Structure probing data (2A3 and DMS) for a 177-nucleotide construct. 2A3 adducts were read by reverse transcription with SuperScript II with manganese. DMS adducts were read by reverse transcription with MarathonRT.
RNA sequence: GGGAACGACUCGAGUAGAGUCGAAAAGCGGUAGUCGAAUCGUUGAAGCACUCUUUCGAUUUUUACCUUUAUGUCUCCCGUUACAUUGGUUCCGCUUUCCAGUUCGAGGGAGAAAGAAUCGAAGACGUCCACAUGUAACUUUCGAGUUACAUGUGGAAAAAGAAACAACAACAACAAC
Reactivity to 2A3 in 0.01 (KOAc 150mM, MgCl2 10mM, bicine 150mM(pH8.5), 24C), signal-to-noise 3, nucleotides 027 to 126: g000c020g010g060u160a080g120u160c070g010a050a100u060c050g030u020u100g070a110a020g060c050a040c070u070c000u080u170u060c030g000a000u010u010u010u040u110a070c010c000u130u230u150a160u200g070u000c000u000c000c010c000g040u130u120a050c040a130u000u040g010g000u040u050c010c000g000c000u010u030u000c000c010a020g010u060u110c130g100a080g000g000g000a010g000a010a000a000g000a000a010u020c020g000a000a030g000a040c040g060
Reactivity to DMS in 0.01 (KOAc 150mM, MgCl2 10mM, bicine 150mM(pH8.5), 24C), signal-to-noise 6, nucleotides 027 to 126: g040c010g010g010u020a110g020u000c050g000a060a050u000c070g010u000u010g000a090a110g020c130a080c120u000c020u000u000u010c010g000a000u000u000u010u010u000a090c070c050u000u010u020a100u020g010u000c000u000c000c000c010g010u000u010a070c170a050u000u000g000g000u000u000c010c020g010c020u000u000u000c010c000a020g000u000u000c200g010a170g000g000g000a010g000a010a030a030g000a020a020u000c010g000a040a010g000a090c280g000